RNA sequence: GGGAACGACUCGAGUAGAGUCGAAAAGAAACGGUGCUUAUUGCAGCUGCUGGCCACUGCACAAGAUUAGACUUAAGACUCUUGUGCGUGUGACAGCGGCUAUUGUAAGAGGCCAUAGAAGCAACAACGAUGCUAAAACGUUCGCGUUUUAGCAUCGAAAAGAAACAACAACAACAAC
Reactivity to DMS in 0.01 (KOAc 150mM, MgCl2 10mM, bicine 150mM(pH8.5), 24C), signal-to-noise 3, nucleotides 027 to 126: g000a080a080a090c210g000g010u000g000c000u000u000a010u000u010g060c070a030g020c040u000g000c000u000g000g000c100c000a000c010u040g000c000a010c000a010a000g000a030u000u010a120g000a180c200u070u030a190a110g000a090c090u000c000u000u020g020u000g010c000g000u000g020u000g020a110c030a000g000c000g000g000c000u000a020u000u000g000u000a010a000g000a070g000g000c000c040a180u010a120g000a050a090g010c100a130a080c170a100a240
Reactivity to 2A3 in 0.01 (KOAc 150mM, MgCl2 10mM, bicine 150mM(pH8.5), 24C), signal-to-noise 4, nucleotides 027 to 126: g140a020a120a000c110g000g030u230g090c020u030u030a040u030u110g020c040a010g000c010u000g000c010u000g010g010c120c010a010c060u210g000c010a000c000a000a000g000a030u130u210a050g080a110c070u110u170a140a020g020a090c030u000c000u000u000g000u000g000c030g050u000g010u010g000a000c010a010g000c000g000g000c000u000a010u000u000g000u010a030a000g020a050g110g000c020c000a020u080a100g110a080a020g010c050a020a050c010a030a020
Annotation:
Structure probing data (DMS and 2A3) for a 177-nucleotide construct. For 2A3 the reverse transcriptase was SuperScript II with manganese. Values are in units of 0.01, from 0 to 300, in steps of 10. The 2A3 profile rests on 2,860 reads. For DMS the reverse transcriptase was MarathonRT. The reactions ran in a buffer of 150 mM KOAc, 10 mM MgCl2 and 150 mM bicine (pH 8.5), at 24 C.